Annotation: Structure probing data (2A3) for a 177-nucleotide construct. 2A3 adducts were read by reverse transcription with SuperScript II with manganese. The 2A3 profile rests on 678 reads. The RNA was probed in 150 mM KOAc, 10 mM MgCl2 and 150 mM bicine (pH 8.5) at 24 C.
[RMDB]
RNA sequence: GGGAACGACUCGAGUAGAGUCGAAAACGCCUCUCUCACCGCAAGUUGGAUCGACCGGACUAUGGGGGACAAAACAUGUGUCCUAAAUCCGCUCCUGAUGUCUGUGCCACGGUGAGUGUUGAGAGCAGCCCAACAGCCAAUUCGUUGGCUGUUGGGCAAAAGAAACAACAACAACAAC
Reactivity to 2A3 in 0.01 (KOAc 150mM, MgCl2 10mM, bicine 150mM(pH8.5), 24C), signal-to-noise 2, nucleotides 027 to 126: c040g020c000c000u000c000u060c000u000c000a000c040c010g050c090a210a000g090u050u060g030g000a000u040c110g080a070c050c010g050g000a000c040u030a110u150g040g000g000g000g050a030c030a000a140a040a050c160a130u220g080u010g090u110c000c000u080a070a060a100u040c080c080g050c020u080c040c000u050g000a070u100g070u050c050u050g070u150g000c000c000a000c010g000g000u070g000a070g000u000g040u000u030g030a030g000a010g000c090a070